[RMDB]
This 177-nucleotide RNA was probed chemically with 2A3 and DMS. Values cover nucleotides 27 to 126. For 2A3 the reverse transcriptase was SuperScript II with manganese. DMS adducts were read by reverse transcription with MarathonRT. It was measured as part of the RMDB library OK1LIB.
RNA sequence: GGGAACGACUCGAGUAGAGUCGAAAAGUAUUUGUGUCUCCACGCUUGAGAAUGUGGUGGUGCUGCAUGACCCAAGGUCCAUUGAUGACGCGUCAUGCGUGGCACGGGAUGCGGAUAGUGUGGUGCAGAUGGUCGCAUACUUCGGUAUGCGACCAUCAAAAGAAACAACAACAACAAC
Reactivity to 2A3 in 0.01 (KOAc 150mM, MgCl2 10mM, bicine 150mM(pH8.5), 24C), signal-to-noise 2, nucleotides 027 to 126: g100u040a210u100u180u060g130u080g070u060c010u000c120c000a000c000g070c010u020u040g040a020g030a300a180u050g080u090g110g080u130g050g110u040g010c000u040g000c000a000u000g000a000c000c000c170a010a040g250g000u000c000c000a120u170u300g020a100u100g010a180c030g020c000g140u020c000a020u000g000c000g030u210g030g000c010a020c000g020g170g020a000u180g030c070g000g000a010u020a000g030u030g040u000g000g000u020g050c030a040
Reactivity to DMS in 0.01 (KOAc 150mM, MgCl2 10mM, bicine 150mM(pH8.5), 24C), signal-to-noise 1, nucleotides 027 to 126: g010u000a110u000u000u020g090u000g010u020c000u000c000c000a000c000g000c000u010u020g070a300g080a090a100u000g000u000g000g010u000g020g000u000g010c000u000g010c000a000u000g000a000c040c040c130a100a140g000g040u000c000c260a180u020u000g000a080u000g000a100c020g000c300g020u000c000a000u000g000c000g020u000g010g000c010a030c000g030g040g000a100u000g040c000g040g000a100u000a000g000u010g100u000g000g000u040g010c010a040